[RMDB]
RNA sequence: GGGAACGACUCGAGUAGAGUCGAAAAGAUAUGGAGUGGUUAGGGAGCCUUAAACAUUCGGAAACGAAUGUGAGGCGAAGAACUAACGUAACAUCUCCUAAGUCAAAUCCCAACUUCGGUUGGGAAACACAAGGCAGAACUUCGGUUCUGCCUUGUGAAAAGAAACAACAACAACAAC
Reactivity to DMS in 0.01 (KOAc 150mM, MgCl2 10mM, bicine 150mM(pH8.5), 24C), signal-to-noise 1, nucleotides 027 to 126: g020a000u000a130u010g000g010a020g030u000g020g010u000u000a000g000g040g000a030g030c000c000u000u000a090a030a060c000a020u010u000c000g000g020a040a060a070c010g000a010a000u000g000u000g010a040g000g040c010g010a100a060g000a060a240c060u010a000a010c000g010u020a150a130c150a100u020c010u000c010c000u000a010a160g000u010c020a090a110a120u000c000c010c020a010a010c000u000u000c210g030g000u000u010g010g000g000a040a090a090